The data come from the RNA Mapping Database (RMDB), library TTRDEL. An RNA of 177 nucleotides, treated with DMS and 2A3 and read out base by base. DMS adducts were read by reverse transcription with MarathonRT. Values cover nucleotides 27 to 126.
RNA sequence: GGGAACGACUCGAGUAGAGUCGAAAAGAUAUGGAUCUCAUCGAUCACCUGGACAAUGACGUCGGAAACGAUAAGACAGUCCUAGGUGGGAGAGAUCCUAAGUCAAACCGCUCGUUCGCGAGCGGAAGGUACUUAAAUACUUCGGUAUUUAAGUACCAAAAGAAACAACAACAACAAC
Reactivity to DMS in 0.01 (KOAc 150mM, MgCl2 10mM, bicine 150mM(pH8.5), 24C), signal-to-noise 7, nucleotides 027 to 126: g000a040u000a300u000g020g000a000u010c000u010c010a230u000c120g010a100u010c010a010c000c010u000g010g000a020c010a080a120u010g010a160c300g010u000c000g000g000a080a110a120c010g010a020u000a090a130g000a120c140a090g010u000c000c000u010a010g000g010u000g000g000g000a040g000a020g010a010u000c000c000u000a010a050g020u010c020a070a120a170c010c000g000c000u000c000g020u000u010c210g020c000g000a010g010c000g000g000a010a010
Reactivity to 2A3 in 0.01 (KOAc 150mM, MgCl2 10mM, bicine 150mM(pH8.5), 24C), signal-to-noise 9, nucleotides 027 to 126: g030a020u080a040u140g000g010a010u000c010u000c020a300u300c080g100a100u100c010a000c010c000u010g000g000a010c040a140a300u190g020a030c100g010u020c010g010g020a100a100a050c020g000a010u030a100a100g130a060c050a030g070u000c020c050u120a030g010g000u000g000g020g010a040g000a000g000a000u000c000c000u000a090a010g040u010c050a060a040a080c000c000g020c000u000c000g040u070u070c300g020c000g140a000g000c000g000g000a010a030

For 2A3 the reverse transcriptase was SuperScript II with manganese. The 2A3 profile rests on 31,994 reads.